Chemical mapping of a 177-nucleotide RNA with DMS. Values are in units of 0.01, from 0 to 300, in steps of 10.

RNA sequence: GGGAACGACUCGAGUAGAGUCGAAAAAAAGAUAUGGAUGCUAGGGAACGUGCAGGUUGCGCUCGGAAACGAGCGACCCAACCUGUCACGGUGCCCCGCGAGGGGAGCCCUAGCAUCCUAAGUCAAAGAUACCAUCGAGGUUCGCCUCGAUGGUAUCAAAAGAAACAACAACAACAAC
Reactivity to DMS in 0.01 (KOAc 150mM, MgCl2 10mM, bicine 150mM(pH8.5), 24C), signal-to-noise 1, nucleotides 027 to 126: a050a120a170g000a030u000a300u000g000g000a000u000g060c010u000a020g000g000g000a280a140c000g020u020g020c050a000g000g000u000u000g000c090g000c000u000c010g000g010a200a070a220c030g000a000g000c000g010a110c230c300c000a040a000c020c000u000g000u000c010a010c000g000g030u010g040c000c020c000c010g000c300g000a150g000g000g000g000a080g030c000c010c000u000a000g000c010a000u000c000c000u000a000a100g020u000c010a030a020a190

The reactions ran in a buffer of 150 mM KOAc, 10 mM MgCl2 and 150 mM bicine (pH 8.5), at 24 C.